[RMDB]
RNA sequence: GGGAACGACUCGAGUAGAGUCGAAAACUUGGGAGCAGAUGAUUUUAUUGCUAAGCCUUUUAGCCCACGUGAGCUAGUUUUGCGUGUCCACAAUAUUUUGCGCCGCCUUCAUCGUGGGGGCGAAACACUGCCCCUCCGGAUUCGUCCGGAGGGGCAGAAAAGAAACAACAACAACAAC
Reactivity to 2A3 in 0.01 (KOAc 150mM, MgCl2 10mM, bicine 150mM(pH8.5), 24C), signal-to-noise 1, nucleotides 027 to 126: c010u040u040g000g000g000a120g150c000a000g000a070u000g070a120u030u200u030u190a130u040u000g190c150u120a000a080g040c000c000u240u000u000u130a040g070c080c000c000a080c040g000u130g070a130g000c050u070a190g110u070u020u220u000g000c000g070u050g000u100c050c000a000c000a000a080u240a280u230u140u080u250g040c050g040c040c000g010c000c000u100u100c040a130u120c080g150u110g000g030g000g000g030c000g030a000a000a000c100a000
An RNA of 177 nucleotides, treated with 2A3 and read out base by base. 2A3 adducts were read by reverse transcription with SuperScript II with manganese. It was measured as part of the RMDB library OK1LIB. The reactions ran in a buffer of 150 mM KOAc, 10 mM MgCl2 and 150 mM bicine (pH 8.5), at 24 C.